[RMDB]
RNA sequence: GGGAACGACUCGAGUAGAGUCGAAAAAUAUUCCGUAAUGGACGGUAGGGUAGGUGUAUCCGUAACACCUCAGUCUGGGAAAAAGUUAGAAACUUCCGUUACCAAUGCGUCCCAGUUGCGAUAGACAAUAAAACUGACUUUUCGAGGUUAGUUUUAUAAAAGAAACAACAACAACAAC
Reactivity to 2A3 in 0.01 (KOAc 150mM, MgCl2 10mM, bicine 150mM(pH8.5), 24C), signal-to-noise 6, nucleotides 027 to 126: a000u140a080u100u060c030c010g000u030a060a070u090g040g020a020c020g000g040u080a040g070g040g080u090a010g000g010u030g010u020a090u050c040c020g010u010a040a000c010a010c010c000u000c000a020g080u000c010u040g010g020g030a040a170a060a060a040g100u140u090a070g070a100a120a030c010u030u000c030c000g010u030u030a070c030c010a050a040u070g020c010g020u010c010c000c000a050g010u080u070g020c010g010a030u040a070g110a050c060a090
Reactivity to DMS in 0.01 (KOAc 150mM, MgCl2 10mM, bicine 150mM(pH8.5), 24C), signal-to-noise 9, nucleotides 027 to 126: a100u010a110u010u000c060c040g010u010a060a060u000g010g010a040c030g000g010u000a070g010g010g020u010a020g000g010u000g010u000a110u010c160c210g010u010a100a050c020a020c010c000u000c100a170g010u010c030u000g000g010g010a060a060a070a070a060g010u000u010a100g000a090a140a120c020u000u000c040c020g010u000u000a070c050c050a040a060u000g010c090g010u000c010c000c010a140g000u000u000g010c060g000a100u010a120g000a080c150a080